[RMDB]
Conditions: 150 mM KOAc, 10 mM MgCl2 and 150 mM bicine (pH 8.5), 24 C. The record gives the reactivity of an RNA of 207 nucleotides to 2A3 and DMS. 2A3 adducts were read by reverse transcription with SuperScript II with manganese. The 2A3 profile rests on 7,682 reads.
RNA sequence: GGGAACGACUCGAGUAGAGUCGAAAAGAAGGUUGAUUGACAUUGAGGCAUUGACAAACACAAUAUCAGAGAUAAUAAAAUCUAAAUUCCACAAUACUACUUAUAAGGAAUUUACCCUUAGCUUUAAGAAAGGAAUGUCAGGGCAUAUGGGUGGUAACAUCAUUGUUCAUUUCGAUGAACAAUGAUGAAAAGAAACAACAACAACAAC
Reactivity to 2A3 in 0.01 (KOAc 150mM, MgCl2 10mM, bicine 150mM(pH8.5), 24C), signal-to-noise 8, nucleotides 027 to 156: g060a030a030g040g030u060u050g030a100u050u060g030a030c060a070u030u060g020a030g030g020c040a040u050u090g030a050c060a040a130a000c030a010c030a110a090u060a050u160c030a030g030a010g030a060u060a150a020u070a040a190a010a020u030c010u030a020a020a060u040u000c010c010a050c060a070a120u080a120c050u050a030c010u130u210a100u050a300a040g010g010a020a020u020u020u090a060c020c000c000u000u050a020g030c030u080u130u090a050a020g050a080a050a010g060g040a060a010u030g030u060c040a030g030g000g000c040a040u040a050u140g040g000g000u020g020g000u020a030a010
Reactivity to DMS in 0.01 (KOAc 150mM, MgCl2 10mM, bicine 150mM(pH8.5), 24C), signal-to-noise 4, nucleotides 027 to 156: g010a130a070g030g020u000u000g010a130u000u000g030a060c050a090u000u000g020a120g030g030c040a090u000u010g010a100c060a090a090a110c050a100c050a060a090u000a110u010c030a080g010a110g010a090u000a050a130u000a070a040a060a110u010c030u000a020a020a080u000u000c010c010a060c080a070a140u010a040c050u000a050c050u000u000a090u000a100a140g000g010a070a010u000u000u000a030c030c010c020u000u000a070g020c050u000u000u000a070a100g010a100a100a060g010g010a050a070u000g010u000c020a070g020g010g010c040a080u000a030u010g000g000g040u000g010g040u000a060a160